[RMDB]
RNA sequence: GGGAACGACUCGAGUAGAGUCGAAAACAAGGUAGAUCAGCGUCGCCAAAAUCAGCACGAGGAGCAGGUAGAGCACUCGACACCUCCUUGGACCGAAUAUACCCGCGCCGUAGGCUCAGGCUGUGUCGGUUCUACUGUAGUUCGCUACAGUAGAACCAAAAGAAACAACAACAACAAC
Reactivity to DMS in 0.01 (KOAc 150mM, MgCl2 10mM, bicine 150mM(pH8.5), 24C), signal-to-noise 3, nucleotides 027 to 126: c090a080a080g030g010u010a030g000a060u000c060a070g000c080g020u000c030g020c040c060a050a060a120a080u000c070a030g020c110a070c060g010a080g000g000a070g030c060a070g030g030u000a090g000a110g000c060a100c040u000c040g020a060c230a060c100c030u000c020c040u000u000g010g000a100c050c000g010a070a060u010a090u010a120c030c020c010g010c100g000c030c040g000u000a070g000g000c020u010c060a070g000g000c030u010g020u010g010u000c060
Reactivity to 2A3 in 0.01 (KOAc 150mM, MgCl2 10mM, bicine 150mM(pH8.5), 24C), signal-to-noise 2, nucleotides 027 to 126: c030a030a000g120g000u110a030g040a160u060c040a000g050c020g030u040c010g000c020c020a100a020a000a090u100c020a010g050c050a000c060g040a040g020g020a060g030c040a010g090g000u090a040g030a020g070c040a040c070u030c000g030a010c030a060c020c030u030c000c030u020u030g020g010a030c020c000g030a070a020u180a030u120a180c030c010c010g030c040g000c000c020g020u040a050g050g000c000u030c040a020g030g050c030u060g010u030g060u080c040
Overview
This 177-nucleotide RNA was probed chemically with DMS and 2A3. It was measured as part of the RMDB library OK2TST. DMS adducts were read by reverse transcription with MarathonRT.